[RMDB]
RNA sequence: GGGAACGACUCGAGUAGAGUCGAAAAUUUCGUUAGUGCCUAGUAAAUCUACAGUUUACGUAAGAUCAGGCGAACAUUUGAAGAAAAAGAGAACAGAGGAAGCAGGCGUCUCAUCUUGUCUUUGUUCUGUACCUGGGAAGAUAAGCCAGCCGUCAACCUGUUAAUUCAAGUUCGCUUGAAUUAACAGAAAAGAAACAACAACAACAAC
Reactivity to 2A3 in 0.01 (KOAc 150mM, MgCl2 10mM, bicine 150mM(pH8.5), 24C), signal-to-noise 5, nucleotides 027 to 156: u030u060u040c020g010u030u120a080g060u040g090c010c010u030a050g030u090a090a050a040u050c040u080a080c020a110g060u050u160u070a080c080g030u060a110a030g010a080u080c050a030g010g010c020g020a040a010c040a050u100u160u200g080a090a070g050a030a090a010a030a010g100a000g010a030a010c020a020g040a020g060g010a050a010g020c050a040g040g040c040g150u030c020u010c060a120u040c020u000u080g120u060c010u010u080u030g050u070u040c030u050g040u050a050c010c010u020g010g010g010a020a110g030a140u080a060a010g030c040c010a010g020c020c010g060u070c010a020a040c000
Reactivity to DMS in 0.01 (KOAc 150mM, MgCl2 10mM, bicine 150mM(pH8.5), 24C), signal-to-noise 3, nucleotides 027 to 156: u010u000u000c040g030u000u000a090g030u010g000c060c020u020a220g010u000a010a030a060u010c020u010a110c180a180g010u010u000u010a040c030g010u000a060a120g010a110u000c060a110g000g020c010g010a100a040c060a150u000u000u000g020a110a150g010a030a070a090a130a120g010a130g010a030a080c050a070g000a020g010g010a060a140g000c080a030g030g010c050g020u010c110u000c060a090u000c030u000u000g010u000c020u010u000u010g000u010u000c040u010g030u000a040c060c030u000g020g010g010a080a060g000a090u000a040a120g020c060c010a090g000c040c010g000u000c030a070a080c140